About this RNA
Structure probing data (2A3 and DMS) for a 177-nucleotide construct. Conditions: 150 mM KOAc, 10 mM MgCl2 and 150 mM bicine (pH 8.5), 24 C.
RNA sequence: GGGAACGACUCGAGUAGAGUCGAAAACACGGAGUGCCGUGACCGGGGGUAACCCUGGCCGGGCACAGGCCCACCUGGGUUAGCCCGCCUGAGAAUGCAUACAUGCUACGAUGAGGGCGGGUGUUACUAUAGAGAUCAGUUUCGACUGAUCUCUAUAAAAAGAAACAACAACAACAAC
Reactivity to 2A3 in 0.01 (KOAc 150mM, MgCl2 10mM, bicine 150mM(pH8.5), 24C), signal-to-noise 2, nucleotides 027 to 126: c110a020c050g090g020a180g050u060g040c020c010g090u090g030a140c010c000g000g010g000g000g030u100a100a150c010c000c000u010g010g000c010c020g000g020g010c040a020c010a050g060g000c000c000c000a070c020c080u140g070g000g010u030u130a010g000c000c000c000g010c030c000u030g020a020g080a150a070u140g010c010a040u110a240c040a120u200g000c010u030a040c060g170a180u120g040a070g010g010g000c010g000g000g000u010g000u000u020a020c000
Reactivity to DMS in 0.01 (KOAc 150mM, MgCl2 10mM, bicine 150mM(pH8.5), 24C), signal-to-noise 9, nucleotides 027 to 126: c060a140c140g000g000a150g010u000g000c010c010g020u020g020a060c010c010g000g010g000g010g000u030a120a130c000c000c000u000g000g020c040c040g010g010g000c000a020c040a090g000g000c010c000c010a180c080c060u000g010g000g000u010u010a160g000c000c000c000g010c000c000u000g000a130g000a190a080u030g010c000a070u050a170c300a140u020g010c020u000a220c100g000a140u020g000a200g000g000g010c010g010g000g010u000g010u010u010a030c110
Values cover nucleotides 27 to 126. Reactivities are rounded to 0.1 and cut off at 0 and 3.